RNA sequence: GGGAACGACUCGAGUAGAGUCGAAAAGCCUGUUCACAGCCGGUUUCCGGGCCCGUCAUCCGGGUGGGUUGCGAGAGGCGGCAUGCAAAUGCCGUCCCAGAUGAAUGGCUGCCACGUUCCGGGUCAACGAAGGUUACUAAUUCGUUAGUAACCUUCGAAAAGAAACAACAACAACAAC
Reactivity to DMS in 0.01 (KOAc 150mM, MgCl2 10mM, bicine 150mM(pH8.5), 24C), signal-to-noise 7, nucleotides 027 to 126: g010c010c000u020g030u010u010c030a090c050a110g010c030c020g010g010u010u020u010c030c020g000g000g010c020c010c050g010u010c120a100u010c100c030g000g010g050u010g000g010g010u010u010g010c080g010a120g010a120g010g000c000g010g000c000a010u000g000c280a080a130a010u000g010c010c000g010u000c000c010c030a070g010a120u010g010a050a050u010g000g000c020u010g010c030c030a100c030g010u010u010c020c010g000g010g000u010c110a090a170
Reactivity to 2A3 in 0.01 (KOAc 150mM, MgCl2 10mM, bicine 150mM(pH8.5), 24C), signal-to-noise 7, nucleotides 027 to 126: g050c010c010u050g060u130u080c060a060c010a070g060c020c000g050g010u030u090u070c030c000g010g020g000c020c020c010g040u050c010a080u020c020c010g000g020g000u070g030g040g010u070u150g070c070g030a130g000a040g060g030c000g000g000c000a000u050g010c020a120a100a030u020g000c000c000g010u050c000c000c010a070g020a080u080g050a060a070u080g030g000c020u030g020c020c000a070c030g030u050u030c010c010g020g020g030u040c040a060a040
Chemical mapping of a 177-nucleotide RNA with DMS and 2A3. The RNA was probed in 150 mM KOAc, 10 mM MgCl2 and 150 mM bicine (pH 8.5) at 24 C. DMS adducts were read by reverse transcription with MarathonRT. Values cover nucleotides 27 to 126.